Conditions: 150 mM KOAc, 10 mM MgCl2 and 150 mM bicine (pH 8.5), 24 C. The record gives the reactivity of an RNA of 207 nucleotides to DMS and 2A3.
[RMDB]
RNA sequence: GGGAACGACUCGAGUAGAGUCGAAAAUGCUGGACUCGCCGCCCGAGCCCAAGCAUGGGCCACCUUCCGGACGAAGAGAUCGCGGGGGCAGGAUCAGCUCCCGAGAGGGGAUGGAUGGCAAAGAGCAUUGGAACGUCGGAGGAAUUCUCCCAAGAAGGAGAAAGAAUAGGUUCGCCUAUUCUUUCUCAAAAGAAACAACAACAACAAC
Reactivity to DMS in 0.01 (KOAc 150mM, MgCl2 10mM, bicine 150mM(pH8.5), 24C), signal-to-noise 1, nucleotides 027 to 156: u000g020c030u010g000g000a090c090u000c040g020c030c100g060c060c090c020g000a190g010c000c000c000a070a130g050c090a130u010g010g040g040c030c030a080c020c010u000u000c080c030g000g010a290c040g000a100a150g010a190g000a050u000c020g030c070g020g000g030g010g100c010a140g020g030a150u030c130a250g000c020u000c020c000c000g000a050g000a130g050g000g020g000a110u010g010g010a080u000g010g010c040a110a070a130g000a190g020c050a120u000u010g010g010a090a080c040g040u000c060g000g020a090g010g060a100a100u010u000c040u000c000c010c040a080a100g010a230a110g040
Reactivity to 2A3 in 0.01 (KOAc 150mM, MgCl2 10mM, bicine 150mM(pH8.5), 24C), signal-to-noise 3, nucleotides 027 to 156: u050g010c010u020g020g000a040c030u030c060g040c050c040g110c020c020c000g030a030g000c060c010c000a070a050g080c040a140u130g020g000g000c050c030a080c020c010u060u030c020c020g110g040a100c050g040a090a070g090a010g040a160u060c050g000c030g070g020g020g000g010c010a010g060g090a200u070c040a030g010c020u010c000c000c000g030a080g000a000g010g050g000g000a040u080g030g040a070u050g040g000c020a050a050a010g040a010g010c040a070u050u080g060g030a090a030c040g080u040c020g030g010a020g000g040a010a040u160u000c030u010c020c020c010a040a060g100a020a020g160
Reactivities are given for positions 27 through 156.
For 2A3 the reverse transcriptase was SuperScript II with manganese.
For 2A3, 2,262 sequencing reads were counted.